[RMDB]
RNA sequence: GGGAACGACUCGAGUAGAGUCGAAAAGCUGAAAGCUUCGGCUUUCAGCAAAGAAAAAGAUGUACAGCUUCUAAGGUACAUCAAGAAUAGAAGCGAAAACAAAAAGCUUAACGUUCGCGUUAAGCAACAUAGUUGCAGAGUUCGCUCUGCAACUAUGAAAAGAAACAACAACAACAAC
Reactivity to 2A3 in 0.01 (KOAc 150mM, MgCl2 10mM, bicine 150mM(pH8.5), 24C), signal-to-noise 3, nucleotides 027 to 126: g010c000u000g000a010a000a000g030c020u050u080c220g120g010c000u000u000u020c000a000g000c000a000a060a020g060a000a140a010a000a000g010a000u020g000u000a020c020a050g020c030u060u040c040u190a090a050g060g000u030a020c000a040u030c020a020a020g090a050a080u140a040g040a030a000g030c040g050a050a070a030a070c070a010a100a030a010a020g010c000u000u000a010a010c000g010u040u060c230g020c000g070u000u000a000a000g000c000a010a010
Reactivity to DMS in 0.01 (KOAc 150mM, MgCl2 10mM, bicine 150mM(pH8.5), 24C), signal-to-noise 3, nucleotides 027 to 126: g000c000u000g020a000a010a010g010c000u000u020c190g040g010c010u000u010u000c000a020g000c010a040a060a090g000a060a120a050a130a180g000a020u000g000u000a030c010a210g000c050u000u000c020u000a060a110g040g010u000a000c010a010u000c020a080a040g030a160a080u010a080g000a010a020g020c020g010a100a070a070a070c200a050a080a090a120a120g010c000u000u010a020a000c000g000u000u020c190g020c020g020u000u000a010a000g010c010a040a040